Chemical mapping of a 207-nucleotide RNA with DMS and 2A3.
Reactivities are given for positions 27 through 156.
[RMDB]
RNA sequence: GGGAACGACUCGAGUAGAGUCGAAAACUUUACACUACACCUUUCGCCACGGCUACGUCCGACAAGCCUGCAAGAUCUCCAACGUAGAACUCAGCAACCUCGUGUCCUAUAUGGGCGUCCUCCACGAAAACCGCUUAGGUCAAAGCGUGCUCCACUGAUCACGUCAUAUGUUCGCAUAUGACGUGAUAAAAGAAACAACAACAACAAC
Reactivity to DMS in 0.01 (KOAc 150mM, MgCl2 10mM, bicine 150mM(pH8.5), 24C), signal-to-noise 1, nucleotides 027 to 156: c040u000u000u000a070c050a180c080u000a130c010a050c060c020u010u020u010c020g000c070c060a120c020g010g000c000u000a040c040g020u020c020c020g040a080c130a090a090g040c010c000u000g000c080a050a070g000a070u000c010u010c000c030a090a140c090g010u000a020g010a080a060c030u000c050a060g030c050a100a140c040c020u000c040g000u000g000u000c000c020u020a130u010a060u000g000g020g000c020g020u000c040c000u010c000c000a070c050g000a000a050a100a040c020c020g020c130u000u000a040g030g050u010c030a040a080a080g030c010g030u010g000c010u000c050c010a100c080u030g010
Reactivity to 2A3 in 0.01 (KOAc 150mM, MgCl2 10mM, bicine 150mM(pH8.5), 24C), signal-to-noise 4, nucleotides 027 to 156: c020u080u130u190a040c090a010c040u110a040c060a070c030c030u030u060u090c070g030c060c020a040c030g010g000c000u090a030c050g060u050c020c010g020a040c030a080a010g020c010c010u040g040c050a040a050g020a100u010c010u000c050c030a070a030c070g040u020a060g010a070a020c020u020c060a010g000c010a060a040c000c020u070c010g040u050g050u100c000c020u120a120u040a100u300g010g010g000c020g030u020c010c010u030c000c020a030c040g000a030a070a020a070c050c000g000c080u070u070a030g040g030u060c040a030a020a010g010c010g010u030g030c030u050c000c010a030c040u050g040
The 2A3 profile rests on 2,826 reads. 2A3 adducts were read by reverse transcription with SuperScript II with manganese. The RNA was probed in 150 mM KOAc, 10 mM MgCl2 and 150 mM bicine (pH 8.5) at 24 C. Source: RMDB library OK3TST, as collected in RNAgym. DMS adducts were read by reverse transcription with MarathonRT.